[RMDB]
RNA sequence: GGGAACGACUCGAGUAGAGUCGAAAAAGCACUGGUACGAUACGUCGUACCAGUGCAGUCGUUGGGAUGGAACGCAAUUAAAUACAUGUGUGGCGUGUAUUUGCGAACGACGUAAUUAUUUUUCAAAAUCACGCUAUCGUGUUCGCACGAUAGCGAAGCUAGCAUUAUUGUUCGCAAUAAUGCUAGCAAAAGAAACAACAACAACAAC
Reactivity to 2A3 in 0.01 (KOAc 150mM, MgCl2 10mM, bicine 150mM(pH8.5), 24C), signal-to-noise 6, nucleotides 027 to 156: a000g010c000a000c000u000g000g010u000a000c010g000a010u020a060c270g070u010c000g010u000a000c000c000a000g000u000g000c010a000g000u000c010g000u000u060g120g030g090a140u120g070g090a160a020c020g010c020a020a040u150u150a140a100a010u030a010c010a020u040g060u020g090u120g260g040c020g000u010g010u010a030u010u030u050g020c000g010a020a000c020g020a000c020g020u030a090a050u120u140a100u060u090u020u040u090c080a070a050a050a100u160c060a030c080g000c000u000a000u000c000g000u010g020u040u010c130g020c060a000c000g000a000u000a000g010c000g000a000a000
Reactivity to DMS in 0.01 (KOAc 150mM, MgCl2 10mM, bicine 150mM(pH8.5), 24C), signal-to-noise 2, nucleotides 027 to 156: a110g020c000a020c010u020g030g010u010a010c000g010a090u000a040c300g040u010c000g000u000a010c000c000a010g020u000g030c020a010g020u000c020g020u020u010g010g020g050a140u010g010g020a080a160c030g000c030a150a150u000u010a010a070a040u000a040c020a050u010g030u010g040u020g040g040c050g010u000g020u000a000u000u000u000g000c110g000a070a080c050g020a150c010g020u000a060a120u000u000a160u000u000u000u000u020c050a060a050a160a150u010c060a200c020g010c000u000a000u010c010g000u000g020u000u020c300g010c010a030c020g020a020u000a010g010c000g010a000a030

The record gives the reactivity of an RNA of 207 nucleotides to 2A3 and DMS. For 2A3, 5,841 sequencing reads were counted. 2A3 adducts were read by reverse transcription with SuperScript II with manganese. Source: RMDB library M2RFPK, as collected in RNAgym. Conditions: 150 mM KOAc, 10 mM MgCl2 and 150 mM bicine (pH 8.5), 24 C.